[RMDB]
RNA sequence: GGGAACGACUCGAGUAGAGUCGAAAAGCCAAUCCGGCAUGGAGUAAGGCAGUCUUUAUUUCGCCUUACAAUUCACAGAAUGCUGUGUCUCGUUCAAUGCUGGGUCUUACCACUCAGACUGUUGAUUUCCAUUACUAACCUUCGGGUUAGUAAUGGAAAAAGAAACAACAACAACAAC
Reactivity to 2A3 in 0.01 (KOAc 150mM, MgCl2 10mM, bicine 150mM(pH8.5), 24C), signal-to-noise 1, nucleotides 027 to 126: g110c030c030a050a050u060c020c020g000g030c000a000u030g000g060a220g010u010a010a000g010g040c040a060g090u020c060u020u300u100a160u070u200u040c070g000c010c000u030u040a000c000a010a050u040u010c020a000c010a040g160a250a190u220g100c060u000g000u000g000u000c010u030c120g140u170u020c020a010a040u010g020c000u000g000g040g010u030c010u010u120a080c000c000a040c010u110c000a050g040a110c030u040g000u070u010g010a120u040u000